[RMDB]
RNA sequence: GGGAACGACUCGAGUAGAGUCGAAAAGAUAUGGAUCUGGUGCGGCUGAUGACCUCGAUCGGAAACGAUCGAGCAAGGCCACACCUGGAUCCUAAGUCAAAGGAGUAUUUGUUCGCAAAUACUCCAAGUACGGUUGGAUGUUCGCAUCCAACCGUACAAAAGAAACAACAACAACAAC
Reactivity to 2A3 in 0.01 (KOAc 150mM, MgCl2 10mM, bicine 150mM(pH8.5), 24C), signal-to-noise 1, nucleotides 027 to 126: g080a020u080a090u210g020g000a020u020c020u010g000g040u000g000c030g020g000c010u050g000a300u150g050a190c020c020u000c010g000a000u000c000g000g040a080a090a010c020g000a000u000c010g000a010g000c020a090a100g020g030c000c010a000c000a000c030c000u000g100g010a000u000c000c000u020a150a030g080u090c040a070a100a130g040g000a000g000u010a040u020u000u000g110u040u180c300g000c280a000a010a010u000a020c000u000c000c010a000a010
Reactivity to DMS in 0.01 (KOAc 150mM, MgCl2 10mM, bicine 150mM(pH8.5), 24C), signal-to-noise 1, nucleotides 027 to 126: g000a030u000a300u000g000g000a000u000c000u000g000g030u010g030c030g000g000c000u000g020a080u010g000a100c300c000u000c000g010a010u000c010g000g000a060a090a290c050g000a000u000c020g000a000g070c010a050a110g010g000c000c000a000c000a020c000c020u020g020g000a000u000c000c000u020a050a090g020u000c070a100a130a120g030g000a050g000u000a000u000u000u000g000u020u020c280g040c010a000a020a000u000a000c000u000c000c000a090a050